Source information: The data come from the RNA Mapping Database (RMDB), library RNAMAK. The record gives the reactivity of an RNA of 207 nucleotides to 2A3. The reactions ran in a buffer of 150 mM KOAc, 10 mM MgCl2 and 150 mM bicine (pH 8.5), at 24 C. For 2A3, 3,271 sequencing reads were counted.

RNA sequence: GGGAACGACUCGAGUAGAGUCGAAAAACUUCUCGCUUCGGCGAGAAGUAAAAACCUUUGUGUUGCGUGAGAGCUUGGAUUUACGCAACCCAUUGGGUUGCGUUGUCAGCUCUACACGGCAACACUCUGGUAAAAGGGAGGGUGUUCGCACCCUCCCCCCUUCAUUUAGUUUCGACUAAAUGAAGGGAAAAGAAACAACAACAACAAC
Reactivity to 2A3 in 0.01 (KOAc 150mM, MgCl2 10mM, bicine 150mM(pH8.5), 24C), signal-to-noise 4, nucleotides 027 to 156: a000c000u000u000c000u010c000g000c010u070u030c180g140g000c010g000a000g040a000a000g000u000a000a010a000a000a000c000c000u000u010u010g000u000g000u010u000g000c010g000u010g020a010g000a020g010c030u170u210g140g040a070u300u300u150a020c000g010c000a000a010c030c000c000a300u190u300g000g010g010u000u000g000c010g010u000u000g010u010c010a010g000c000u000c010u020a050c000a000c000g140g000c000a000a000c000a000c000u000c000u000g010g020u130a090a120a120a090g020g040g000a010g010g020g010u010g040u120u200c290g050c110a010c000c000c000u000c000c000c000